Source information
Structure probing data (DMS and 2A3) for a 177-nucleotide construct. The 2A3 profile rests on 1,741 reads. The RNA was probed in 150 mM KOAc, 10 mM MgCl2 and 150 mM bicine (pH 8.5) at 24 C. The data come from the RNA Mapping Database (RMDB), library OK2TST. The DMS profile rests on 1,610 reads. For 2A3 the reverse transcriptase was SuperScript II with manganese.

RNA sequence: GGGAACGACUCGAGUAGAGUCGAAAAUUGACAGUGUCCAUGACACCGGGCAGGGCAUCCUGCACGAUCGCGUCGGCCGGCAGCAGCCAUUUGCCGGCUACCUUCGUAGCGCCGGGGAUGCGGCCGGGUCCGCAAUCCAUUUCGAUGGAUUGCGGACAAAAGAAACAACAACAACAAC
Reactivity to DMS in 0.01 (KOAc 150mM, MgCl2 10mM, bicine 150mM(pH8.5), 24C), signal-to-noise 2, nucleotides 027 to 126: u030u020g010a090c070a130g030u000g070u010c030c110a130u000g010a030c040a090c060c020g030g000g000c010a080g000g010g000c120a070u000c020c010u020g020c020a040c000g020a030u000c140g010c150g040u000c070g030g010c020c020g010g030c000a050g020c200a060g000c100c150a160u010u000u000g000c000c000g000g000c010u000a010c020c020u000u010c080g010u000a090g030c120g050c160c180g000g000g000g000a040u000g000c010g010g010c010c020g000g000
Reactivity to 2A3 in 0.01 (KOAc 150mM, MgCl2 10mM, bicine 150mM(pH8.5), 24C), signal-to-noise 1, nucleotides 027 to 126: u090u070g060a030c010a000g000u000g020u070c090c080a160u170g020a020c000a030c040c040g020g040g040c010a020g050g160g010c040a090u040c000c000u030g000c000a020c030g000a020u130c120g020c030g090u040c050g060g000c020c000g010g030c000a010g000c010a020g100c050c040a110u140u070u090g060c000c000g000g000c000u000a000c000c010u050u100c040g030u040a100g000c020g010c060c040g050g000g000g030a010u020g000c000g000g020c010c000g000g110